The record gives the reactivity of an RNA of 177 nucleotides to DMS and 2A3. The RNA was probed in 150 mM KOAc, 10 mM MgCl2 and 150 mM bicine (pH 8.5) at 24 C. Source: RMDB library RFM100, as collected in RNAgym. 2A3 adducts were read by reverse transcription with SuperScript II with manganese.
RNA sequence: GGGAACGACUCGAGUAGAGUCGAAAAAACUCGUUGAAAACCAAUGCUUUUGCUGCCCUUGGAUUUCGGGGGAUGGUAGUUGUGGAUUUCUAGGGAAGAGAACCAAAGGUCGGGACCCAUCUUGAGUUACUCGGUUAACAUUCGUGUUAACCGAGUAAAAAGAAACAACAACAACAAC
Reactivity to DMS in 0.01 (KOAc 150mM, MgCl2 10mM, bicine 150mM(pH8.5), 24C), signal-to-noise 1, nucleotides 027 to 126: a000a020c020u000c000g010u000u070g000a070a030a130a030c090c040a080a060u030g000c020u000u020u030u080g000c060u000g000c130c000c010u010u050g000g010a180u020u010u000c000g000g060g000g060g020a040u000g000g000u000a060g010u010u020g060u010g000g000a160u000u000u050c040u010a090g000g000g040a000a060g000a120g000a060a130c070c060a030a070a050g050g000u000c110g000g010g020a160c010c000c120a090u050c020u010u000g000a150g000u000
Reactivity to 2A3 in 0.01 (KOAc 150mM, MgCl2 10mM, bicine 150mM(pH8.5), 24C), signal-to-noise 3, nucleotides 027 to 126: a000a000c030u040c040g080u030u050g070a090a090a000a000c000c000a060a030u070g000c010u080u140u060u100g030c040u090g020c000c000c000u060u050g110g040a170u080u170u160c030g000g000g000g000g100a040u090g030g030u040a130g030u000u040g020u030g070g060a160u050u000u000c030u040a040g000g050g010a010a080g050a000g030a120a040c000c000a000a110a000g010g010u030c000g000g010g030a000c000c010c000a030u030c040u020u100g040a070g050u010